[RMDB]
Annotation: The record gives the reactivity of an RNA of 177 nucleotides to 2A3 and DMS. DMS adducts were read by reverse transcription with MarathonRT.
RNA sequence: GGGAACGACUCGAGUAGAGUCGAAAACUACAAUGAUGACACUCAUAUUUUGUUACCUAUUUUUUCUGGCAUCUCUAAUGCUAGAGCAGCGACGUUUAAGUACUUUCCUGCUCGAUGAAUAUAAACACGUAAUGUUACUGUUCGCAGUAACAUUACGAAAAGAAACAACAACAACAAC
Reactivity to 2A3 in 0.01 (KOAc 150mM, MgCl2 10mM, bicine 150mM(pH8.5), 24C), signal-to-noise 5, nucleotides 027 to 126: c040u090a040c040a030a110u110g050a020u060g050a040c020a020c110u060c040a050u040a190u110u130u080u050g050u050u050a060c010c000u070a180u090u150u020u000u020u000c020u030g020g000c000a030u010c060u000c050u300a150a040u030g000c020u030a030g000a000g000c000a000g000c020g030a010c010g020u020u050u050a190a150g300u020a030c000u060u120u000c000c000u000g030c020u000c020g000a090u070g030a070a010u100a040u050a040a120a010c090a000
Reactivity to DMS in 0.01 (KOAc 150mM, MgCl2 10mM, bicine 150mM(pH8.5), 24C), signal-to-noise 5, nucleotides 027 to 126: c070u010a070c210a030a050u020g020a040u000g010a170c150a090c080u020c030a030u000a080u000u000u000u000g000u000u000a070c050c020u000a020u000u000u000u000u000u000c020u000g000g000c010a000u010c220u000c150u010a060a030u010g010c020u000a060g000a000g020c030a010g010c080g050a030c300g000u000u000u000a020a150g000u000a000c020u000u000u010c070c000u000g000c000u000c000g000a110u000g000a030a030u010a050u020a060a030a050c230a170

The 2A3 profile rests on 4,436 reads. 2A3 adducts were read by reverse transcription with SuperScript II with manganese. It was measured as part of the RMDB library RFMREP.